RNA sequence: GGGAACGACUCGAGUAGAGUCGAAAAUGAGGCUUUCGAGAAAUUCGUAAGUCUCUUUGCUACUUUAAUGACUUUUUCUGGUAAUGUAGAUCUUGAUGCGUUAGCUAGUGAUAUUUUUGACACUCCUUACCAUCGUAUUCUUCGGAAUACGAUGGUAAAAAGAAACAACAACAACAAC
Reactivity to 2A3 in 0.01 (KOAc 150mM, MgCl2 10mM, bicine 150mM(pH8.5), 24C), signal-to-noise 2, nucleotides 027 to 126: u070g010a010g000g000c000u010u000u030c020g010a030g020a140a300a060u150u000c000g000u000a010a000g000u000c000u000c000u010u060u010g010c010u020a100c040u010u180u180a130a110u180g080a060c020u080u040u070u120u010c030u060g050g010u090a060a040u050g010u070a060g010a060u000c020u040u090g030a040u020g050c020g010u050u030a040g030c020u020a000g060u020g100a060u010a110u070u090u010u030u070g030a010c000a000c080u000c000c000u020
Reactivity to DMS in 0.01 (KOAc 150mM, MgCl2 10mM, bicine 150mM(pH8.5), 24C), signal-to-noise 1, nucleotides 027 to 126: u030g000a000g010g000c010u000u000u010c000g000a010g000a170a070a160u000u000c010g000u000a020a010g010u010c010u000c010u000u000u000g000c030u000a070c060u000u000u000a080a080u000g000a090c100u000u000u010u000u000c060u000g010g020u000a090a060u010g010u010a020g010a040u010c070u000u000g000a090u010g010c050g030u000u000a040g010c110u000a020g000u000g000a060u020a030u000u000u000u000u010g010a160c100a100c080u010c060c040u010
This 177-nucleotide RNA was probed chemically with 2A3 and DMS. The DMS profile rests on 1,395 reads. Values cover nucleotides 27 to 126.